Chemical mapping of a 207-nucleotide RNA with 2A3 and DMS. The DMS profile rests on 5,547 reads. Source: RMDB library OK3TST, as collected in RNAgym.
RNA sequence: GGGAACGACUCGAGUAGAGUCGAAAAUCUAGCUCAAAGCACAAGCUGAGCAAGCUGUGGUGCCUGUAUAUAGCUAUUGAUGGGUAGAGUUGGGGUGAGAUGAUGGGAAUGGCCUUCUUGCCAAGACCCAAGGAGAGGCCAGAGCAGGACUGCCCAAUACUCCUAAAAUGUUCGCAUUUUAGGAGUAAAAAGAAACAACAACAACAAC
Reactivity to 2A3 in 0.01 (KOAc 150mM, MgCl2 10mM, bicine 150mM(pH8.5), 24C), signal-to-noise 3, nucleotides 027 to 156: u020c010u010a020g000c020u030c070a090a130a030g010c040a030c060a150a030g000c010u010g050a030g030c060a040a010g010c020u160g080u050g300g010u020g020c000c000u020g050u020a060u010a020u020a210g050c030u020a040u120u150g080a100u060g010g000g080u090a060g000a050g090u030u160g020g000g000g000u050g030a100g010a040u120g010a040u060g010g010g060a040a100u020g020g000c000c090u140u120c030u080u160g020c020c030a050a040g100a130c010c000c020a000a010g050g000a090g000a010g000g010c040c010a020g010a000g010c010a000g030g030a030c020u080g000c000c000c000a010a010
Reactivity to DMS in 0.01 (KOAc 150mM, MgCl2 10mM, bicine 150mM(pH8.5), 24C), signal-to-noise 3, nucleotides 027 to 156: u020c050u000a080g020c030u000c040a090a170a090g040c030a030c030a070a050g010c010u010g020a200g030c110a190a070g020c030u020g030u000g020g000u020g030c020c040u000g030u010a090u000a140u010a090g020c030u000a060u010u010g000a080u000g000g010g020u000a130g010a080g030u000u000g010g010g020g040u000g010a130g010a060u000g000a140u010g020g000g010a110a180u000g010g020c010c070u000u000c050u000u000g000c050c020a080a140g010a120c040c020c020a090a140g000g010a150g000a080g010g030c020c010a080g000a070g030c000a090g000g000a080c060u000g010c000c030c000a010a300

The reactions ran in a buffer of 150 mM KOAc, 10 mM MgCl2 and 150 mM bicine (pH 8.5), at 24 C. For DMS the reverse transcriptase was MarathonRT.